Chemical mapping of a 207-nucleotide RNA with 2A3.
Conditions: 150 mM KOAc, 10 mM MgCl2 and 150 mM bicine (pH 8.5), 24 C.
RNA sequence: GGGAACGACUCGAGUAGAGUCGAAAACGCUGGGUCAGUCGCUGAGCGUCACGGGAGUUCCCUACACUGAAGCGCGCACGGUGUAGGGAACAUCGAUCGUGACGACCCUCAAAAGUCUGACCUGUGCUGAAGCGCGCACGGCAACCGAAAGGUGCGAGUCAGAGACAUACUUCGGUAUGUCUCUGACAAAAGAAACAACAACAACAAC
Reactivity to 2A3 in 0.01 (KOAc 150mM, MgCl2 10mM, bicine 150mM(pH8.5), 24C), signal-to-noise 1, nucleotides 027 to 156: c030g010c030u080g000g030g000u000c000a000g000u020c020g080c250u080g010a000g040c000g010u000c000a000c020g000g060g020a040g000u000u000c000c010c020u000a000c000a000c000u060g030a160a010g070c000g000c000g000c030a030c040g010g050u000g000u000a010g000g000g000a000a000c000a000u100c010g000a010u040c000g000u000g000a000c000g010a040c060c060c000u010c010a120a190a050a020g050u070c010u010g000a000c000c000u030g000u030g020c040u130g000a060a030g020c000g020c000g020c040a000c010g090g000c000a010a270c030c000g000a120a030a000g030g030u030g020c020g020a020